[RMDB]
RNA sequence: GGGAACGACUCGAGUAGAGUCGAAAAGAUAUGGAUUCUUGUGGCACUGAUGACCAAAGUCGGAAACGACUUUGCAAGGUGCACACGGGAAUCCUAAGUCAAACCGUACGUGUUCGCACGUACGGAAGACUACUUACCCGUUCGCGGGUAAGUAGUCAAAAGAAACAACAACAACAAC
Reactivity to DMS in 0.01 (KOAc 150mM, MgCl2 10mM, bicine 150mM(pH8.5), 24C), signal-to-noise 2, nucleotides 027 to 126: g000a030u000a300u000g000g000a020u000u000c010u000u000g050u000g000g000c000a030c000u020g000a090u030g000a200c300c000a000a000a010g020u030c000g000g000a140a090a270c020g000a010c020u000u000u010g020c020a080a100g000g000u000g020c030a070c030a010c000g000g000g000a050a000u000c000c000u000a020a080g000u010c040a090a110a160c040c020g010u010a010c010g030u000g000u000u010c300g020c030a000c000g000u000a010c000g000g000a020a080
Reactivity to 2A3 in 0.01 (KOAc 150mM, MgCl2 10mM, bicine 150mM(pH8.5), 24C), signal-to-noise 2, nucleotides 027 to 126: g030a030u100a070u230g000g000a000u000u020c020u040u010g010u000g020g050c000a000c030u170g050a300u130g020a210c070c000a010a000a000g000u040c000g000g050a060a080a080c000g000a000c000u000u000u000g010c020a100a210g000g020u020g020c110a050c000a000c100g010g000g000a000a010u000c000c000u010a110a010g050u000c030a070a080a100c010c030g020u000a000c000g000u030g080u060u160c300g010c180a010c000g020u000a000c010g000g000a020a010
An RNA of 177 nucleotides, treated with DMS and 2A3 and read out base by base. The reactions ran in a buffer of 150 mM KOAc, 10 mM MgCl2 and 150 mM bicine (pH 8.5), at 24 C.